[RMDB]
RNA sequence: GGGAACGACUCGAGUAGAGUCGAAAAGAUAUGGAGAUUACAUGGGAGUCCCUCGGAAACGAGAGGACGAAGAACAUGGAUCUCCUAAGUCAAAACCAGGAAAUGCGGUUCGCCGCAUUUCCUGGAACCAACUACUUUUCUUCGGAAAAGUAGUUGGAAAAGAAACAACAACAACAAC
Reactivity to DMS in 0.01 (KOAc 150mM, MgCl2 10mM, bicine 150mM(pH8.5), 24C), signal-to-noise 1, nucleotides 027 to 126: g000a000u000a300u020g010g000a020g000a000u000u000a040c000a030u010g000g000g010a130g000u000c000c000c020u000c000g000g000a060a090a090c000g030a040g010a180g030g010a010c030g040a060a100g000a110a180c030a010u010g000g020a010u000c000u000c020c000u010a000a100g010u030c030a110a080a070a180c000c020a000g000g010a000a000a010u010g010c020g000g000u010u020c300g010c000c010g030c000a010u000u000u030c000c000u010g000g000a020a040
Reactivity to 2A3 in 0.01 (KOAc 150mM, MgCl2 10mM, bicine 150mM(pH8.5), 24C), signal-to-noise 1, nucleotides 027 to 126: g050a020u080a050u140g030g000a020g000a020u030u080a300c020a010u010g000g020g010a040g010u000c000c010c000u000c020g020g050a040a050a010c030g020a020g070a210g060g020a000c020g020a010a010g000a000a000c010a000u010g010g000a000u010c000u000c010c000u010a100a000g000u000c050a010a020a100a200c000c000a000g020g000a000a000a000u020g000c050g010g120u100u160c300g060c150c000g000c010a010u000u000u000c010c000u000g000g000a000a000

Source information: This 177-nucleotide RNA was probed chemically with DMS and 2A3. The RNA was probed in 150 mM KOAc, 10 mM MgCl2 and 150 mM bicine (pH 8.5) at 24 C. The 2A3 profile rests on 2,763 reads.